[RMDB]
RNA sequence: GGGAACGACUCGAGUAGAGUCGAAAAUCAAUGUUGAGAAGACUAAAGUGAACGUCUGGCUCUGGGGCAUUCUGCCUGUCUGGAUCUGAGUGGGGUGCACAUGUUGGUGCCGCUUUCUAGGAAGCUCGACAUUCCAUAUCUUCGGAUAUGGAAUGUCAAAAGAAACAACAACAACAAC
Reactivity to 2A3 in 0.01 (KOAc 150mM, MgCl2 10mM, bicine 150mM(pH8.5), 24C), signal-to-noise 1, nucleotides 027 to 126: u040c050a070a070u180g040u080u080g050a040g020a140a020g040a040c030u090a230a040a090g090u070g110a130a040c090g040u010c030u030g030g080c000u020c030u050g010g000g020g000c000a010u060u050c030u080g020c000c020u040g090u070c080u060g050g070a050u000c040u100g030a040g040u040g000g030g000g010u030g060c010a030c000a050u100g040u080u030g000g000u010g050c020c020g000c040u000u060u010c030u020a090g060g040a020a000g010c000u020c070
Reactivity to DMS in 0.01 (KOAc 150mM, MgCl2 10mM, bicine 150mM(pH8.5), 24C), signal-to-noise 3, nucleotides 027 to 126: u010c090a060a080u010g010u020u000g000a110g020a190a050g010a070c030u010a050a110a120g020u010g000a100a070c130g010u000c030u010g000g010c040u000c050u000g020g010g010g000c050a050u010u010c110u010g010c040c020u000g030u000c090u000g000g000a090u000c060u000g000a080g020u000g000g000g020g030u010g020c040a040c040a100u000g010u010u010g010g010u000g000c040c090g000c020u000u000u010c030u000a120g010g010a070a070g020c070u010c150